[RMDB]
RNA sequence: GGGAACGACUCGAGUAGAGUCGAAAAGAGCGUCGAGAGACGAAGAGAAGUGCACCGAUCAGCAAGGGCGAACGUAAUGGUGCACAAGAGUAAGUCAGUGUAACGUUCUCCGGGCACUGGAGGCAGACGGUAGGAUGCUCUUCGGAGCAUCCUACCGAAAAGAAACAACAACAACAAC
Reactivity to 2A3 in 0.01 (KOAc 150mM, MgCl2 10mM, bicine 150mM(pH8.5), 24C), signal-to-noise 2, nucleotides 027 to 126: g060a010g000c010g000u000c010g010a030g000a000g010a090c080g000a140a000g090a020g020a230a010g000u010g000c000a020c000c020g020a080u080c050a040g000c040a110a150g050g060g050c050g020a070a000c020g000u120a100a050u130g000g000u040g010c020a010c000a000a020g020a000g090u120a160a000g020u030c010a000g020u020g070u120a060a000c010g020u010u000c030u050c050c000g000g030g010c030a000c060u050g010g030a040g000g040c040a020g020a070
Reactivity to DMS in 0.01 (KOAc 150mM, MgCl2 10mM, bicine 150mM(pH8.5), 24C), signal-to-noise 2, nucleotides 027 to 126: g000a050g000c020g020u000c020g000a250g000a150g000a020c060g000a170a040g000a170g000a270a030g050u000g000c000a020c050c030g000a160u030c150a120g050c160a110a030g000g000g000c110g030a000a040c040g040u070a030a170u080g000g000u000g010c020a060c010a040a040g010a150g000u020a020a110g010u000c030a070g000u030g010u020a030a180c090g040u000u000c000u000c000c060g000g010g000c010a050c010u000g000g000a180g000g000c080a030g040a150